An RNA of 177 nucleotides, treated with 2A3 and DMS and read out base by base. The RNA was probed in 150 mM KOAc, 10 mM MgCl2 and 150 mM bicine (pH 8.5) at 24 C.
RNA sequence: GGGAACGACUCGAGUAGAGUCGAAAAUUGUCAUGUUUCGACAUGACAAACAUAAGAUCUAGACAAAAACCGCCAAAAAGUCUAGAUCAAAUAAAGGCCGAAGACUAGGUUAGUUCGCUAACCUAAAACUAUAUUGAGGGUUCGCCCUCAAUAUAGUAAAAGAAACAACAACAACAAC
Reactivity to 2A3 in 0.01 (KOAc 150mM, MgCl2 10mM, bicine 150mM(pH8.5), 24C), signal-to-noise 2, nucleotides 027 to 126: u040u020g000u000c000a000u000g030u020u080u060c180g060a010c010a000u000g000a000c000a000a060a000c030a050u200a050a050g000a010u000c000u010a000g000a020c010a000a260a080a060a070c070c080g050c090c020a050a190a060a060a010g010u000c000u000a000g000a000u000c000a000a010a000u040a020a010a000g060g030c030c020g090a090a010g040a110c090u010a000g030g010u000u000a000g000u060u040c150g020c130u010a000a000c000c010u020a010a040a000
Reactivity to DMS in 0.01 (KOAc 150mM, MgCl2 10mM, bicine 150mM(pH8.5), 24C), signal-to-noise 3, nucleotides 027 to 126: u000u000g000u000c000a020u000g000u010u010u030c160g000a080c000a000u000g000a020c000a000a030a060c130a080u010a090a200g000a010u000c010u000a010g000a000c000a080a060a080a150a110c140c080g010c090c070a040a060a080a110a150g000u010c000u000a000g000a000u000c000a000a060a030u010a030a080a070g010g020c030c050g000a030a070g000a090c180u000a010g000g000u010u000a010g010u010u010c150g000c000u000a000a000c000c000u010a010a060a080
Reactivities are given for positions 27 through 126. Source: RMDB library M2PK50, as collected in RNAgym. For 2A3, 2,903 sequencing reads were counted.